[RMDB]
RNA sequence: GGGAACGACUCGAGUAGAGUCGAAAAGAUAUGGAAGUUAGCAAGAAUGGGAUCUAGUCCUUUGAUCUGCUUCGGAAACGAAGCAGGGAGGACUAGAUCACCAUUUGAUGACCUAACUUCCUAAGUCCUCAAGUAGUACCUUCGGGUACUACUUGAGAAAAGAAACAACAACAACAAC
Reactivity to DMS in 0.01 (KOAc 150mM, MgCl2 10mM, bicine 150mM(pH8.5), 24C), signal-to-noise 2, nucleotides 027 to 126: g000a110u010a280u000g020g030a010a010g000u000u000a000g020c040a090a180g010a000a010u000g000g000g000a030u000c010u000a000g010u000c000c010u000u000u010g000a040u030c000u010g040c000u010u000c000g000g030a090a100a260c000g010a020a030g020c010a000g000g010g010a000g010g000a020c010u030a000g000a020u000c000a080c010c010a000u000u010u000g000a050u000g000a030c300c000u000a000a010c000u000u000c000c000u000a050a090g000u010c040
Reactivity to 2A3 in 0.01 (KOAc 150mM, MgCl2 10mM, bicine 150mM(pH8.5), 24C), signal-to-noise 1, nucleotides 027 to 126: g030a030u120a120u240g000g000a030a000g030u010u030a010g010c090a300a300g000a040a000u010g010g000g000a000u000c000u000a030g000u000c000c000u270u240u160g060a030u030c000u010g010c010u000u000c000g010g020a010a100a110c000g010a010a000g000c000a020g000g000g010a000g000g010a010c010u000a000g000a000u010c000a000c010c000a000u010u020u000g000a070u030g000a020c000c020u000a000a030c000u000u040c000c000u000a040a010g060u000c030